[RMDB]
RNA sequence: GGGAACGACUCGAGUAGAGUCGAAAAGGAGAUAAUCAGGAGCAGUGCGUGUCCGCCGUACACCUCCCCGCCUCCCCACACCCGGCUGCCCCUGGCCUGCUAGGCCGAGACCAUGGCCGGCGUGUUUGGCUGGGCCUGGGGCUGAGGCAGCCCCUCACACUACCUGAUUAUUCGUAAUCAGGUAGUGAAAAGAAACAACAACAACAAC
Reactivity to DMS in 0.01 (KOAc 150mM, MgCl2 10mM, bicine 150mM(pH8.5), 24C), signal-to-noise 2, nucleotides 027 to 156: g010g020a090g010a140u000a090a130u010c070a060g000g010a100g030c060a150g030u000g030c030g020u000g020u000c080c070g020c170c030g000u010a090c070a140c040c000u000c020c020c020c030g030c070c010u010c020c010c010c060a090c080a060c030c010c040g020g040c020u000g010c030c010c000c020u000g040g010c010c010u000g080c070u000a080g040g040c000c010g000a050g020a110c000c080a090u010g030g000c000c040g000g000c060g030u010g020u000u000u010g030g030c000u010g000g030g010c030c040u000g010g000g020g020c000u010g000a060g030g020c010a070g000c010c010c010c010u010c040a300
Reactivity to 2A3 in 0.01 (KOAc 150mM, MgCl2 10mM, bicine 150mM(pH8.5), 24C), signal-to-noise 1, nucleotides 027 to 156: g050g030a050g020a050u170a120a090u230c090a070g020g030a030g030c130a080g060u010g010c020g010u080g050u050c050c060g020c010c010g070u070a030c040a070c020c000u020c020c000c020c000g060c010c000u030c010c000c020c000a050c000a010c000c020c010g000g000c010u020g010c010c010c000c040u030g020g000c040c000u070g150c050u110a020g030g000c000c000g020a000g020a050c050c030a080u110g090g000c010c000g090g000c050g020u230g060u000u040u080g020g000c030u060g000g050g000c000c020u010g000g020g000g000c030u000g010a010g020g000c000a000g000c000c000c000c000u050c010a010
This 207-nucleotide RNA was probed chemically with DMS and 2A3. The reactions ran in a buffer of 150 mM KOAc, 10 mM MgCl2 and 150 mM bicine (pH 8.5), at 24 C. For DMS, 7,008 sequencing reads were counted. 2A3 adducts were read by reverse transcription with SuperScript II with manganese. For DMS the reverse transcriptase was MarathonRT.